[RMDB]
RNA sequence: GGGAACGACUCGAGUAGAGUCGAAAAGCAUAGUGACCUAAAAGGUGUAGAAUAGGUGGGAGGGGCAACCCGACGGUGAAAUACCACCCCUUUUGGCGUUACUUUGCUAACUUGGAAUAACAGUACCUCAUAAUUCAUUUUAUGAUGGUUUUGGUGACUUGGACAAUAACUUCGGUUAUUGUCCAAGAAAAGAAACAACAACAACAAC
Reactivity to DMS in 0.01 (KOAc 150mM, MgCl2 10mM, bicine 150mM(pH8.5), 24C), signal-to-noise 1, nucleotides 027 to 156: g040c000a050u010a020g030u000g030a070c020c000u010a010a050a030a050g010g010u000g030u000a030g010a180a100u010a090g000g020u000g010g030g000a110g080g040g000g030c300a070a150c000c000c030g000a160c240g000g000u000g020a060a060a150u000a160c020c010a060c000c000c000c010u000u000u000u000g030g000c140g010u000u000a000c030u000u000u020g010c000u010a020a100c050u000u000g020g010a190a100u000a070a040c040a030g020u000a030c010c000u000c010a010u000a010a000u000u000c280a170u000u010u000u000a010u000g000a050u020g020g000u000u000u000u020g000g010u020g010a140
Reactivity to 2A3 in 0.01 (KOAc 150mM, MgCl2 10mM, bicine 150mM(pH8.5), 24C), signal-to-noise 2, nucleotides 027 to 156: g000c000a000u010a060g000u000g010a000c010c000u010a010a000a000a000g000g000u170g030u140a040g050a280a010u010a010g020g000u020g020g020g010a160g020g000g000g000c030a050a050c030c000c000g000a000c010g010g000u010g010a010a020a000u010a000c000c000a010c020c000c000c000u000u000u020u000g050g000c120g000u000u000a000c000u080u010u000g000c000u020a020a070c030u020u100g080g080a090a140u100a120a030c020a040g090u070a020c000c010u000c010a010u010a010a030u080u160c120a070u140u110u010u020a020u010g020a050u150g050g000u050u050u050u090g100g000u090g050a050